[RMDB]
RNA sequence: GGGAACGACUCGAGUAGAGUCGAAAAGGGGUCGACCUUUGAUCUCGCGUGCUCGACGAUCUAUACUGAAGCCUCCACGGUAUAGGGAGAGCACCGAGGGAGGUCGACGGAGGCACCCAAAGUCGAAGUGGACUGGUUCGCCAGUCCACUUCGACAACUUAACAAUGAAGUUCGCUUCAUUGUUAAGAAAAGAAACAACAACAACAAC
Reactivity to 2A3 in 0.01 (KOAc 150mM, MgCl2 10mM, bicine 150mM(pH8.5), 24C), signal-to-noise 2, nucleotides 027 to 156: g040g020g060g020u050c020g010a010c010c000u300u300u050g000a000u000c010u000c010g030c240g030u020g000c010u050c010g260a300c000g000a100u000c010u020a010u000a000c020u050g060a170a010g020c000c000u000c000c000a010c010g020g000u000a010u020a010g000g000g000a010g000a000g000c020a000c000c000g000a000g000g000g000a000g000g000u000c000g000a000c000g000g000a000g010g040c010a020c000c030c020a110a080a000g000u000c000g010a000a020g000u000g010g000a020c000u030g060g000u100u150c210g000c050c000a000g000u000c000c000a000c000u000u000c000g010a000c000a000a000

An RNA of 207 nucleotides, treated with 2A3 and read out base by base. It was measured as part of the RMDB library RNAMAK. Conditions: 150 mM KOAc, 10 mM MgCl2 and 150 mM bicine (pH 8.5), 24 C.